[RMDB]
RNA sequence: GGGAACGACUCGAGUAGAGUCGAAAAAAUAAAAGAUGUGAAGGUGAUUAAUUACCAAUGUAAGAUGAUCUGUGAACAUCACGGGACUUCCUUGGCAGCAUAUGAAGAAGCUCAUCUCCUGUAGUCACAGGGGAGAAAAAGCAGAGGAUCAGGCCAACAUAAUACUGCCGUUCGCGGCAGUAUUAUGAAAAGAAACAACAACAACAAC
Reactivity to 2A3 in 0.01 (KOAc 150mM, MgCl2 10mM, bicine 150mM(pH8.5), 24C), signal-to-noise 2, nucleotides 027 to 156: a000a010u200a020a000a000a020g030a030u080g010u020g040a070a030g060g100u030g050a050u060u150a210a100u060u060a070c030c040a110a040u300g000u040a030a030g030a080u080g010a020u000c030u010g050u070g110a090a000c010a010u100c030a010c050g000g000g040a030c060u030u000c020c020u000u040g050g000c050a030g010c010a060u030a060u250g060a130a040g020a080a000g000c010u010c020a080u000c030u000c010c000u080g030u130a130g110u150c060a000c010a040g020g000g030g020a000g030a000a090a010a000a000g000c020a000g000a010g000g000a000u020c040a020g000g090c000c020a030a000
Reactivity to DMS in 0.01 (KOAc 150mM, MgCl2 10mM, bicine 150mM(pH8.5), 24C), signal-to-noise 1, nucleotides 027 to 156: a040a040u050a000a130a090a170g010a070u000g000u000g020a090a120g000g030u000g000a100u000u000a060a150u000u000a080c010c030a060a050u000g020u000a030a060g030a050u000g030a080u000c030u000g030u030g000a110a080c040a050u000c040a110c100g020g000g020a080c030u000u000c050c050u010u000g030g040c000a130g000c060a170u000a110u000g020a050a050g010a120a020g030c000u010c050a270u010c000u000c010c000u000g030u000a120g070u010c170a130c030a020g030g010g030g010a040g030a040a020a050a060a100g000c060a120g040a100g050g000a030u000c040a120g010g010c030c010a040a120
Overview
An RNA of 207 nucleotides, treated with 2A3 and DMS and read out base by base. The DMS profile rests on 1,888 reads. Values are in units of 0.01, from 0 to 300, in steps of 10. The reactions ran in a buffer of 150 mM KOAc, 10 mM MgCl2 and 150 mM bicine (pH 8.5), at 24 C. Source: RMDB library OK3TST, as collected in RNAgym. For DMS the reverse transcriptase was MarathonRT. 2A3 adducts were read by reverse transcription with SuperScript II with manganese.